[RMDB]
Structure probing data (2A3) for a 207-nucleotide construct. As a SHAPE reagent, 2A3 marks flexible, mostly unpaired nucleotides at the ribose 2'-OH. The 2A3 profile rests on 615 reads. Conditions: 150 mM KOAc, 10 mM MgCl2 and 150 mM bicine (pH 8.5), 24 C.
RNA sequence: GGGAACGACUCGAGUAGAGUCGAAAACGGAAGCAUUAAAACCAUUCGAGCUAGUCAAUGCGUGGCGUGUCUCUCCGCAGCGUGUUGGCGAAUGUAAAGAGUGACUAAGAAUGUAGUACCGAGGAUGAUAAGAGCAAUUCGUUCGCGAAUUGCUCAAGAGUGUAGGUCACUUCGGUGACCUACACUCAAAAGAAACAACAACAACAAC
Reactivity to 2A3 in 0.01 (KOAc 150mM, MgCl2 10mM, bicine 150mM(pH8.5), 24C), signal-to-noise 1, nucleotides 027 to 156: c030g010g000a000a010g040c000a000u000u220a000a050a060a010c050c020a000u000u000c050g000a040g160c000u070a000g010u000c020a010a020u020g010c010g000u040g090g030c010g000u140g050u080c020u010c010u000c090c010g060c020a020g030c000g000u010g020u000u020g000g000c010g010a020a030u160g020u070a120a120a000g010a000g000u030g010a000c000u020a080a010g060a190a000u040g000u060a050g000u060a040c020c080g010a020g160g000a040u130g010a080u140a300a200g000a000g000c000a000a000u000u000c030g020u000u060c060g000c000g100a000a000u000u000g000c000u000c000a000a000
Values cover nucleotides 27 to 156.